[RMDB]
RNA sequence: GGGAACGACUCGAGUAGAGUCGAAAAUCGACGUCGAUCACCCAACGCCAGUCGUCGUGCGUCAUCUCCACGAUCGGACCGCCGACAACGAUGCCGGCGUUGCUGAAUACGACAUCGACGUGGCCGAGGAAUGAUAGCAAUUCGUUGCUAUCAUUCCAAAAGAAACAACAACAACAAC
Reactivity to 2A3 in 0.01 (KOAc 150mM, MgCl2 10mM, bicine 150mM(pH8.5), 24C), signal-to-noise 7, nucleotides 027 to 126: u030c010g020a000c010g000u000c000g000a010u020c020a030c010c020c000a010a000c000g000c010c010a030g050u100c020g000u000c000g010u100g070c050g040u030c020a090u050c030u060c060c060a130c150g180a190u170c110g040g010a030c060c060g040c020c020g050a040c020a030a010c040g020a030u110g060c080c050g010g000c000g000u010u010g000c010u010g040a090a060u170a190c050g010a020c030a020u010c000g000a020c020g030u080g090g040c030c020g030a080
Reactivity to DMS in 0.01 (KOAc 150mM, MgCl2 10mM, bicine 150mM(pH8.5), 24C), signal-to-noise 6, nucleotides 027 to 126: u000c010g010a020c060g030u000c000g020a050u010c060a060c240c280c020a010a020c010g020c000c000a070g020u000c050g020u000c010g010u010g010c160g000u000c040a120u000c050u000c060c050a110c190g010a100u000c180g010g010a050c120c090g010c120c080g010a020c030a120a030c030g010a030u000g010c080c050g000g000c000g020u010u000g010c240u000g000a040a050u000a120c020g000a030c030a030u000c010g000a020c040g010u000g010g020c010c010g000a170
Annotation: An RNA of 177 nucleotides, treated with 2A3 and DMS and read out base by base. Source: RMDB library OK2TRN, as collected in RNAgym. DMS adducts were read by reverse transcription with MarathonRT. As a SHAPE reagent, 2A3 marks flexible, mostly unpaired nucleotides at the ribose 2'-OH. Conditions: 150 mM KOAc, 10 mM MgCl2 and 150 mM bicine (pH 8.5), 24 C.